[RMDB]
RNA sequence: GGGAACGACUCGAGUAGAGUCGAAAAGGAUGCAACGUAGUCAUAAGGGACGUACUCCCUCUUGUUAUGUCUUAUGACUAGUCGUAAUUUGAUACAAGAGGGAGAUCAAGUUACGACAUCUGUAUCGCUACAACAUUCUAUUCGUAGAGUGUUGUAGAAAAGAAACAACAACAACAAC
Reactivity to 2A3 in 0.01 (KOAc 150mM, MgCl2 10mM, bicine 150mM(pH8.5), 24C), signal-to-noise 1, nucleotides 027 to 126: g020g000a000u000g000c080a150a080c280g300u300a260g010u050c040a020u030a130a030g130g110g180a090c070g010u030a050c000u000c000c020c000u030c000u000u090g070u020u050a050u060g030u010c030u030u030a030u030g000a030c020u020a030g030u020c020g020u000a030a050u060u050u070g170a140u130a210c300a300a300g000a000g000g000g040a010g040a010u000c000a020a030g010u020u030a010c050g020a020c030a040u060c050u040g020u030a020u010c010g010
Chemical mapping of a 177-nucleotide RNA with 2A3.
It was measured as part of the RMDB library OK2TRN.
Conditions: 150 mM KOAc, 10 mM MgCl2 and 150 mM bicine (pH 8.5), 24 C.
For 2A3 the reverse transcriptase was SuperScript II with manganese.